Chemical mapping of a 177-nucleotide RNA with DMS and 2A3.
Values cover nucleotides 27 to 126.
RNA sequence: GGGAACGACUCGAGUAGAGUCGAAAAGAUAUGGACUAAGAGGAGCUUGGAUUUACGAAUACAUCGGAAACGAUGUAGGAGUUGUCAGCUCCCUUAGUCCUAAGUCAAACCGCGGUUCGCCGCGGAAGUACAGUGAGAUCUUCGGAUCUCACUGUACAAAAGAAACAACAACAACAAC
Reactivity to DMS in 0.01 (KOAc 150mM, MgCl2 10mM, bicine 150mM(pH8.5), 24C), signal-to-noise 3, nucleotides 027 to 126: g000a060u000a300u000g020g010a010c000u000a010a020g010a120g060g000a000g000c010u000u010g000g020a000u010u010u020a010c010g000a300a210u000a000c000a000u000c010g010g010a100a080a200c000g010a020u000g000u000a000g000g020a300g010u010u010g000u000c010a030g000c000u000c000c020c000u000u000a000g000u000c000c000u000a010a050g010u010c070a030a070a230c000c000g020c000g000g010u000u020c260g010c010c010g000c010g000g000a000a040
Reactivity to 2A3 in 0.01 (KOAc 150mM, MgCl2 10mM, bicine 150mM(pH8.5), 24C), signal-to-noise 3, nucleotides 027 to 126: g020a010u080a030u120g000g000a000c010u010a000a010g200a300g060g010a000g010c030u130u200g210g000a110u300u300u240a020c010g000a020a010u020a000c000a010u000c000g020g050a050a070a040c000g010a000u000g000u000a000g000g000a030g000u020u010g010u030c020a010g000c000u000c000c000c000u000u000a000g000u000c000c000u000a000a010g000u000c000a040a040a010c010c010g000c030g000g020u080u150c300g070c110c010g000c040g000g010a020a010
The RNA was probed in 150 mM KOAc, 10 mM MgCl2 and 150 mM bicine (pH 8.5) at 24 C.